Conditions: 150 mM KOAc, 10 mM MgCl2 and 150 mM bicine (pH 8.5), 24 C. An RNA of 177 nucleotides, treated with 2A3 and DMS and read out base by base. For DMS, 1,508 sequencing reads were counted. For 2A3 the reverse transcriptase was SuperScript II with manganese. Reactivities are given for positions 27 through 126.

RNA sequence: GGGAACGACUCGAGUAGAGUCGAAAAGAAGAAUUACAUGUGCGUUAAGUGUCAUUGGAACGGGAAGUUGUCCAUUGAACGAAAAAUGAAUUUAUUUCAUAUGCGGUGCAUGUAUCGCAAAAGAAAACCCUCGGCUAUUAUUCGUAAUAGCCGAGGGAAAAGAAACAACAACAACAAC
Reactivity to 2A3 in 0.01 (KOAc 150mM, MgCl2 10mM, bicine 150mM(pH8.5), 24C), signal-to-noise 3, nucleotides 027 to 126: g120a000a010g020a000a070u130u080a000c000a000u030g020u000g010c020g040u050u090a180a060g110u130g100u220c000a010u000u000g010g000a050a040c080g000g050g150a160a080g100u190u120g040u020c000c000a010u000u010g010a020a040c030g080a160a030a000a000a000u020g030a000a000u000u140u200a180u060u070u090c000a010u040a010u100g140c020g080g000u010g000c030a020u000g030u040a000u060c000g000c100a000a020a030a090g130a020a070a040a020
Reactivity to DMS in 0.01 (KOAc 150mM, MgCl2 10mM, bicine 150mM(pH8.5), 24C), signal-to-noise 1, nucleotides 027 to 126: g000a070a150g000a060a160u050u000a040c000a000u000g000u000g000c040g070u000u000a020a210g000u040g000u000c020a000u010u000g000g000a030a090c040g020g020g050a070a160g020u020u000g000u000c030c000a020u000u000g020a080a060c030g060a010a010a050a010a000u000g000a000a000u010u070u000a050u040u000u000c000a010u000a000u110g000c150g060g020u000g010c020a000u000g000u000a010u000c160g010c250a000a080a050a080g070a170a020a010a070

For 2A3, 1,593 sequencing reads were counted.